[RMDB]
RNA sequence: GGGAACGACUCGAGUAGAGUCGAAAAGCUGCGUGAAACCUCGCUGUUUUCUUGGCUAACUUUCAGCGAGGUGAGGCAAGGCGGCAAAAAAAAGUUGGGAACAGCAACGGCAAGCAAAAAAAAAGUUACAAGUUGCGAUGGUUCGCCAUCGCAACAAGAUAACAUCUGUGUUCGCACAGAUGUUAUCAAAAGAAACAACAACAACAAC
Reactivity to 2A3 in 0.01 (KOAc 150mM, MgCl2 10mM, bicine 150mM(pH8.5), 24C), signal-to-noise 3, nucleotides 027 to 156: g020c000u020g000c020g040u080g060a130a030a010c000c000u000c010g000c000u000g020u000u020u010u010c090u160u230g130g000c080u020a010a010c010u000u010u010c000a000g000c000g010a000g000g000u010g000a000g000g040c050a030a020g100g000c010g000g000c020a020a050a070a020a000a010a020a030g060u080u050g030g020g040a100a050c040a040g060c020a040a040c010g050g010c020a030a040g020c020a140a060a010a010a000a000a000a010a000g020u020u020a020c030a080a060g000u000u000g000c000g000a000u010g000g070u040u050c160g040c090c000a000u000c000g000c010a000a000c000a000a000
Reactivity to DMS in 0.01 (KOAc 150mM, MgCl2 10mM, bicine 150mM(pH8.5), 24C), signal-to-noise 1, nucleotides 027 to 156: g020c020u020g000c070g030u030g010a160a280a040c010c000u010c010g000c010u000g040u000u000u000u000c010u000u000g020g040c010u000a030a010c020u000u000u000c040a020g050c030g040a020g030g000u000g010a010g080g000c070a150a130g000g000c070g110g000c000a000a010a000a060a060a040a140a100g020u000u010g020g000g010a090a120c050a060g020c050a110a090c040g000g010c030a060a100g020c030a000a080a000a030a030a030a000a060a120g010u010u000a040c030a080a160g000u010u000g000c020g000a030u000g000g000u020u010c300g020c020c020a040u000c000g080c010a000a000c010a020a070